Chemical mapping of a 177-nucleotide RNA with DMS and 2A3. For DMS the reverse transcriptase was MarathonRT. Reactivities are given for positions 27 through 126. For 2A3 the reverse transcriptase was SuperScript II with manganese. Source: RMDB libraries RFM100 and RFMREP, as collected in RNAgym. For DMS, 2,427 sequencing reads were counted. The RNA was probed in 150 mM KOAc, 10 mM MgCl2 and 150 mM bicine (pH 8.5) at 24 C.

RNA sequence: GGGAACGACUCGAGUAGAGUCGAAAACUUCUCUUCCAAUCUAUUGAUCUGCCCUUCCAAUACUAUCAGAUCAAUAGAUUGGAAGAGCAGAUCGAAAAAUGCUCUCACCUUAAGGAGAGACAGCGACGUCUCGUUAGAGUUUCGACUCUAACGAGACAAAAGAAACAACAACAACAAC
Reactivity to DMS in 0.01 (KOAc 150mM, MgCl2 10mM, bicine 150mM(pH8.5), 24C), signal-to-noise 2, nucleotides 027 to 126: c060u000u000c000u020c000u000u000c010c040a020a000u020c030u040a000u000u010g000a020u010c000u000g010c080c020c010u050u050c060c040a020a000u030a080c100u000a100u020c000a000g000a010u000c080a020a000u000a000g000a010u010u000g000g000a000a020g000a030g010c160a040g010a140u010c060g000a020a050a130a080a180u060g000c010u000c010u000c010a080c060c070u060u040a180a180g000g000a020g020a000g020a030c110a120g000c050g040a120c190
Reactivity to 2A3 in 0.01 (KOAc 150mM, MgCl2 10mM, bicine 150mM(pH8.5), 24C), signal-to-noise 6, nucleotides 027 to 126: c020u010u010c000u010c000u010u020c000c000a000a010u000c000u010a020u000u020g000a000u000c000u010g030c020c020c060u190u110c070c050a100a050u120a220c030u080a090u210c020a000g000a010u000c000a010a000u000a000g000a000u000u000g000g000a000a000g000a000g000c000a010g000a040u100c070g060a060a050a030a030a040u130g000c000u010c000u000c010a180c070c080u230u230a120a090g100g000a010g010a000g050a050c020a010g050c050g070a060c060